[RMDB]
RNA sequence: GGGAACGACUCGAGUAGAGUCGAAAAGCUCGGAGACGAGCAAGGCUGACAAAACGCUGUCCCGACCUCCACGUGGUGUCGGCUGGAUAAUGCUGCAUUAUGUUGCAUUUAUCAACUGGGAAGCAAACAGGGUAUUAGGGUUCGCCCUAAUACCCUGAAAAGAAACAACAACAACAAC
Reactivity to DMS in 0.01 (KOAc 150mM, MgCl2 10mM, bicine 150mM(pH8.5), 24C), signal-to-noise 3, nucleotides 027 to 126: g000c000u000c000g020g010a240g010a270c010g020a020g020c010a040a050g010g000c010u000g010a040c020a090a070a080a080c190g000c000u000g020u000c040c000c000g010a040c040c020u010c030c030a130c190g040u020g010g010u000g010u000c020g000g000c010u000g030g010a030u000a000a000u020g010c020u000g000c000a150u040u050a080u030g030u020u010g000c010a010u000u020u030a000u010c010a040a010c090u030g030g000g010a110a050g020c020a110a100a300
Reactivity to 2A3 in 0.01 (KOAc 150mM, MgCl2 10mM, bicine 150mM(pH8.5), 24C), signal-to-noise 9, nucleotides 027 to 126: g000c000u000c000g040g020a140g010a060c020g000a000g000c010a010a060g020g010c000u010g000a010c040a030a100a080a040c140g010c020u060g140u050c000c000c000g010a010c000c000u040c030c030a190c130g070u140g020g000u010g000u010c000g000g000c000u020g010g000a010u010a030a010u010g000c010u020g010c010a060u140u140a140u300g020u020u020g000c010a000u060u060u110a030u030c030a010a010c070u160g000g000g010a020a000g000c010a000a030a020